[RMDB]
RNA sequence: GGGAACGACUCGAGUAGAGUCGAAAAACUCGAACGAGAACGUACGAACGAGUUCUCGUGAUCACGUUCGUUCGUGAGAACGAGUUCUCGAACUCGUGAACGUGAUCACGUUCGAGAACUCACGUGAACACACGAGAACGUGUGAGAACGAGUGAUCCAAACUGGGCAGUUUCGACUGCCCAGUUUGAAAAGAAACAACAACAACAAC
Reactivity to 2A3 in 0.01 (KOAc 150mM, MgCl2 10mM, bicine 150mM(pH8.5), 24C), signal-to-noise 2, nucleotides 027 to 156: a000c010u010c010g040a020a020c000g000a010g020a080a030c040g110u160a080c060g080a200a040c120g070a040g050u000u000c010u000c010g010u000g010a000u010c000a020c000g010u030u010c000g000u060u080c050g060u120g060a100g020a050a000c030g000a020g030u020u020c040u040c090g030a040a000c000u030c140g060u120g000a030a000c020g110u130g070a040u020c000a020c010g000u030u140c000g050a000g000a010a000c000u000c050a000c010g040u010g010a090a000c050a000c000a000c070g020a050g050a300a030c000g020u010g000u020g020a040g010a030a020c030g000a020g030u050g040a070u100c080
Structure probing data (2A3) for a 207-nucleotide construct.
Values cover nucleotides 27 to 156.
For 2A3 the reverse transcriptase was SuperScript II with manganese.
Conditions: 150 mM KOAc, 10 mM MgCl2 and 150 mM bicine (pH 8.5), 24 C.
For 2A3, 991 sequencing reads were counted.